[RMDB]
RNA sequence: GGGAACGACUCGAGUAGAGUCGAAAAGAUAUGGAACCACUGUGGAGGCGAAGAACUCGGAAACGAGGGAGCCUACCAUUGGUUCCUAAGUCAAAGGUCCAACGUAUGUUCGCAUACGUUGGACCAAUCAUCCGUUACUGUUCGCAGUAACGGAUGAAAAAGAAACAACAACAACAAC
Reactivity to 2A3 in 0.01 (KOAc 150mM, MgCl2 10mM, bicine 150mM(pH8.5), 24C), signal-to-noise 2, nucleotides 027 to 126: g050a020u080a040u150g000g000a000a010c000c030a060c180u150g090u190g060g050a000g000g040c030g120a300a070g030a070a090c000u000c000g010g040a070a060a030c010g010a010g000g000g020a010g000c010c000u190a090c000c010a000u000u040g010g000u000u000c010c000u000a070a020g050u040c060a110a000a130g000g010u000c000c000a000a000c000g000u000a000u030g040u060u100c300g000c200a000u000a010c000g000u000u000g010g010a000c010c000a010a000
Reactivity to DMS in 0.01 (KOAc 150mM, MgCl2 10mM, bicine 150mM(pH8.5), 24C), signal-to-noise 2, nucleotides 027 to 126: g000a050u020a300u010g000g010a050a010c000c010a010c300u000g020u030g020g000a070g000g000c000g030a070a180g010a080a180c000u000c040g000g010a110a080a120c010g000a020g010g000g000a120g010c000c000u000a070c040c010a030u000u000g000g020u000u000c000c000u010a010a080g000u000c020a050a100a130g000g010u000c000c000a010a000c000g010u030a010u000g000u010u000c170g000c000a000u000a010c000g000u010u000g010g000a000c000c000a000a010